[RMDB]
RNA sequence: GGGAACGACUCGAGUAGAGUCGAAAAGAUGCGUGGCUGUCGCUUUGGCGCGUAAAGCACCACGCAGCAUCUUGCCGUCCAACGCGAUCGGCACCAAUCCACUGGGGUCGCUGCUGGCCACGUGUGCCCUAUAAAUCAGUUUCGACUGAUUUAUAGGAAAAGAAACAACAACAACAAC
Reactivity to DMS in 0.01 (KOAc 150mM, MgCl2 10mM, bicine 150mM(pH8.5), 24C), signal-to-noise 9, nucleotides 027 to 126: g010a020u010g000c000g020u000g000g010c080u010g010u010c060g000c020u000u010u010g000g010c040g010c170g010u010a040a040a060g010c090a120c070c090a090c170g000c100a060g010c060a060u010c060u010u000g010c020c010g010u030c010c020a070a040c100g010c040g000a040u030c050g010g020c000a050c050c030a050a080u020c070c060a110c120u010g000g000g000g010u000c060g000c140u010g000c130u020g000g000c010c010a020c020g010u000g000u010g000c110
Reactivity to 2A3 in 0.01 (KOAc 150mM, MgCl2 10mM, bicine 150mM(pH8.5), 24C), signal-to-noise 9, nucleotides 027 to 126: g080a020u060g000c010g010u010g010g000c050u050g050u160c030g010c010u050u020u060g070g010c030g010c030g040u070a070a080a030g020c020a040c080c010a060c110g050c020a010g010c000a060u030c040u030u050g010c010c000g040u090c010c010a090a050c070g020c050g030a030u110c030g010g000c000a010c010c010a020a090u080c040c010a070c120u070g010g000g020g040u050c050g010c060u100g010c050u080g030g000c000c000a020c020g020u040g030u030g040c000